[RMDB]
RNA sequence: GGGAACGACUCGAGUAGAGUCGAAAAGAACCGCGAUUCGUCGCGGUUCGAGCGCCGUAGGGCGCAACGGCGUAACGGCAGCAUUAGCGCGCAGCUGCCGACGAUCGGGUGGUUUCGACCACCCGAAAAAGUCUGACAGUUUCGACUGUCAGACUUUAAAAGAAACAACAACAACAAC
Reactivity to DMS in 0.01 (KOAc 150mM, MgCl2 10mM, bicine 150mM(pH8.5), 24C), signal-to-noise 1, nucleotides 027 to 126: g000a010a010c000c020g000c000g000a010u000u000c170g030u010c000g030c000g010g010u030u010c000g010a100g000c000g040c020c010g000u010a070g000g020g020c040g020c020a010a000c060g010g010c040g010u020a060a190c040g010g000c020a010g020c050a060u000u000a130g020c010g000c070g030c060a150g010c000u000g000c000c000g030a050c140g000a150u030c000g000g020g000u000g000g000u000u000u000c180g000a030c000c000a000c000c000c000g000a000a000